[RMDB]
RNA sequence: GGGAACGACUCGAGUAGAGUCGAAAACGAAAGUCUGACGGAGCAACGCCGCGUGAGUGAAGAAGGUUUUCGGAUCGUAAAACUCUGUUGUUAGGGAAGAACAAGUCAGGUAGUAACUGACCUGACCAAGGACUCUAAGUUUCGACUUAGAGUCCUUAAAAGAAACAACAACAACAAC
Reactivity to 2A3 in 0.01 (KOAc 150mM, MgCl2 10mM, bicine 150mM(pH8.5), 24C), signal-to-noise 1, nucleotides 027 to 126: c010g050a030a030a010g010u000c010u070g030a050c030g100g010a030g040c020a040a000c050g050c120c000g110c040g030u180g000a050g050u030g020a070a080g030a050a030g040g010u010u010u030u070c080g070g000a010u020c020g000u060a000a010a000a020c020u000c040u110g020u060u010g050u050u040a160g000g000g010a030a090g020a060a020c030a150a000g020u000c000a000g010g000u040a000g000u040a090a020c030u020g020a000c000c000u000g000a000c020c020
Reactivity to DMS in 0.01 (KOAc 150mM, MgCl2 10mM, bicine 150mM(pH8.5), 24C), signal-to-noise 4, nucleotides 027 to 126: c070g030a050a140a120g010u010c050u000g010a180c070g010g010a110g010c030a080a100c100g000c050c030g020c080g040u000g010a060g010u010g000a100a080g000a140a130g000g000u000u010u010u010c070g010g010a080u000c040g010u010a020a040a300a100c030u000c010u000g030u000u000g000u000u010a090g010g010g000a040a090g000a060a040c100a090a090g000u010c000a010g000g000u000a050g000u000a110a070c190u040g000a010c010c000u000g010a010c020c200
An RNA of 177 nucleotides, treated with 2A3 and DMS and read out base by base. 2A3 adducts were read by reverse transcription with SuperScript II with manganese. For DMS, 2,796 sequencing reads were counted. DMS adducts were read by reverse transcription with MarathonRT.